[RMDB]
RNA sequence: GGGAACGACUCGAGUAGAGUCGAAAACAAACUGUCCAGAGAUAGGGCCGGUUGGGAUUCCAAAAAAAGAAGGAAAGACUAAAUGCCAGAGUGGUCAAUCCAAAGCAUUUAUUGGGGAAACUUACAGAGUGCUGCAGCAGUCCUCAAAAUGAACAGACCAUAUUACCUCAUUCGUGAGGUAAUAUGGAAAAGAAACAACAACAACAAC
Reactivity to DMS in 0.01 (KOAc 150mM, MgCl2 10mM, bicine 150mM(pH8.5), 24C), signal-to-noise 1, nucleotides 027 to 156: c050a060a090a090c020u000g020u010c000c000a090g010a250g020a100u010a180g030g030g040c050c040g000g050u010u000g020g010g000a120u000u030c010c020a000a000a090a110a070a080a220g080a070a090g000g010a080a060a270g000a070c050u000a010a160a070u000g050c020c090a050g000a110g090u000g020g030u000c050a030a170u000c000c030a050a100a140g070c000a020u000u000u010a110u030u010g020g000g000g020a080a030a070c030u000u000a080c000a030g030a150g050u000g000c020u030g000c050a020g030c030a060g000u000c000c000u020c030a020a030a050a070u010g030a080a070c090a050g000a100
Reactivity to 2A3 in 0.01 (KOAc 150mM, MgCl2 10mM, bicine 150mM(pH8.5), 24C), signal-to-noise 3, nucleotides 027 to 156: c020a010a070a010c020u020g020u030c010c040a060g030a010g020a140u130a140g020g010g010c030c050g020g040u070u040g010g030g010a100u050u100c010c000a160a000a000a000a000a000a000g090a030a010g020g010a000a040a070g020a010c020u070a060a090a030u120g010c050c030a030g020a020g090u050g020g020u060c020a010a020u020c020c020a040a040a030g000c000a000u050u070u110a100u180u130g020g010g000g040a050a110a020c020u030u060a020c030a010g070a080g040u100g040c040u020g020c020a050g010c010a000g050u030c000c010u080c000a080a090a030a060u070g010a060a020c030a050g040a030